[RMDB]
RNA sequence: GGGAACGACUCGAGUAGAGUCGAAAAUAUGCUAUAUCACAUUUCGGGCUUAACGAAAGGACAACCUGGCGAUGCCGAGUUGACUUUACAUAAGCUUGUUGAUUUGAUGUCAAGUGAUAGUGCAGUUACUGUCACACACACAACUGCAUGUGAUAAGGCUUGGAUGAAUAUUCGUAUUCAUCCAAGCAAAAGAAACAACAACAACAAC
Reactivity to 2A3 in 0.01 (KOAc 150mM, MgCl2 10mM, bicine 150mM(pH8.5), 24C), signal-to-noise 8, nucleotides 027 to 156: u260a050u070g040c040u060a050u010a030u190c010a020c010a030u070u140u120c050g000g010g010c010u030u030a120a100c110g020a030a000a020g030g040a080c010a010a010c010c020u040g020g000c140g210a110u300g010c000c010g000a000g000u000u000g010a020c000u020u000u090a060c020a030u040a000a000g000c000u020u030g040u040u040g060a190u080u020u090g160a210u040g040u110c100a140a160g000u010g030a020u020a020g010u030g040c080a060g050u170u110a040c020u030g010u050c020a040c000a000c000a000c000a010c010a100a040c010u060g010c040a010u030g010u010g020a040u020a080a040g110
Reactivity to DMS in 0.01 (KOAc 150mM, MgCl2 10mM, bicine 150mM(pH8.5), 24C), signal-to-noise 3, nucleotides 027 to 156: u000a080u000g010c050u000a120u000a090u000c020a050c010a100u000u000u020c030g010g010g000c010u000u000a060a200c100g000a070a050a040g000g020a180c010a000a020c010c040u020g040g000c010g010a140u000g020c010c000g020a030g030u010u000g000a100c020u000u000u000a100c060a200u000a040a030g010c000u010u000g020u010u000g000a160u000u000u000g020a150u000g010u000c110a090a160g020u020g000a050u000a040g030u000g030c010a280g020u000u000a060c020u000g000u000c000a060c090a170c100a030c030a110c010a030a090c050u000g000c060a040u000g000u020g020a040u000a060a250g020
Background: The record gives the reactivity of an RNA of 207 nucleotides to 2A3 and DMS. Conditions: 150 mM KOAc, 10 mM MgCl2 and 150 mM bicine (pH 8.5), 24 C. For 2A3, 8,881 sequencing reads were counted.